Conditions: 150 mM KOAc, 10 mM MgCl2 and 150 mM bicine (pH 8.5), 24 C. The record gives the reactivity of an RNA of 177 nucleotides to 2A3 and DMS. 2A3 is a SHAPE reagent: it acylates the 2'-hydroxyl of flexible nucleotides of all four kinds. The DMS profile rests on 42,424 reads. For 2A3 the reverse transcriptase was SuperScript II with manganese.
RNA sequence: GGGAACGACUCGAGUAGAGUCGAAAAGGCUCGCGUGCGUCGUGCUCGGGAUCGUGUUCGGCUACGUAUGGCAGCCGGUGCAGCACGCGAUCGACGCGGUCGGCCAGUGGCUGCUGACGGCGGGCGAAUGAUUUAAUGGGUUCGCCCAUUAAAUCAUAAAAGAAACAACAACAACAAC
Reactivity to 2A3 in 0.01 (KOAc 150mM, MgCl2 10mM, bicine 150mM(pH8.5), 24C), signal-to-noise 8, nucleotides 027 to 126: g110g010c010u010c010g020c020g070u140g020c010g020u030c000g010u070g040c060u020c010g000g060g020a180u130c030g010u020g050u150u060c010g010g010c010u040a020c030g210u250a180u270g110g000c030a010g000c010c010g000g000u080g040c030a030g030c000a010c020g050c010g010a030u060c010g010a020c010g000c010g030g010u040c000g000g000c010c000a110g060u150g170g020c130u050g000c000u020g030a010c020g070g010c000g000g030g010c020g030a060
Reactivity to DMS in 0.01 (KOAc 150mM, MgCl2 10mM, bicine 150mM(pH8.5), 24C), signal-to-noise 9, nucleotides 027 to 126: g010g010c010u000c010g020c030g020u010g020c030g010u000c020g020u000g010c120u000c030g020g000g010a100u010c030g010u000g010u000u000c010g010g010c010u000a040c030g010u010a110u010g020g020c050a020g020c000c010g010g010u010g040c180a080g010c060a030c010g010c030g000a110u010c030g010a050c030g010c020g010g010u000c010g010g010c020c040a200g020u010g010g020c110u000g010c020u000g010a030c020g010g010c010g000g000g000c020g010a100